[RMDB]
RNA sequence: GGGAACGACUCGAGUAGAGUCGAAAAGAUAUGGACCUCUUGGCAAGAUCCCAGUCGGAAACGACUGUGAGAUUGAUGACCCAAAGAGGUCCUAAGUCAAAAGCAUCAAUUGUUCGCAAUUGAUGCAUCAUGUAGUGCUGUUCGCAGCACUACAUGAAAAAGAAACAACAACAACAAC
Reactivity to 2A3 in 0.01 (KOAc 150mM, MgCl2 10mM, bicine 150mM(pH8.5), 24C), signal-to-noise 2, nucleotides 027 to 126: g000a010u020a020u050g000g010a020c000c000u010c000u000u000g010g000c060a090a080g020a010u000c010c010c000a010g020u000c010g000g020a000a010a000c000g000a010c010u040g010u100g080a300g010a050u000u030g050a090u070g020a030c000c000c050a040a070a050g000a000g000g000u000c000c000u000a000a010g000u020c000a050a040a000a120g010c000a000u000c000a010a000u020u030g020u100u190c300g020c220a010a010u010u010g000a000u020g000c000a030
Reactivity to DMS in 0.01 (KOAc 150mM, MgCl2 10mM, bicine 150mM(pH8.5), 24C), signal-to-noise 3, nucleotides 027 to 126: g000a010u000a020u020g000g000a000c000c010u000c010u010u000g030g000c000a040a030g000a010u000c000c010c010a020g010u000c000g000g010a000a010a030c000g030a020c000u000g030u010g000a160g000a020u000u010g010a060u030g000a040c300c000c000a010a030a170g010a020g010g000u010c000c000u000a000a080g010u000c010a100a130a160a190g020c000a000u000c010a000a000u000u000g000u000u000c220g020c000a020a000u000u010g000a010u020g000c010a010
Description:
This 177-nucleotide RNA was probed chemically with 2A3 and DMS. The 2A3 profile rests on 6,456 reads. Conditions: 150 mM KOAc, 10 mM MgCl2 and 150 mM bicine (pH 8.5), 24 C.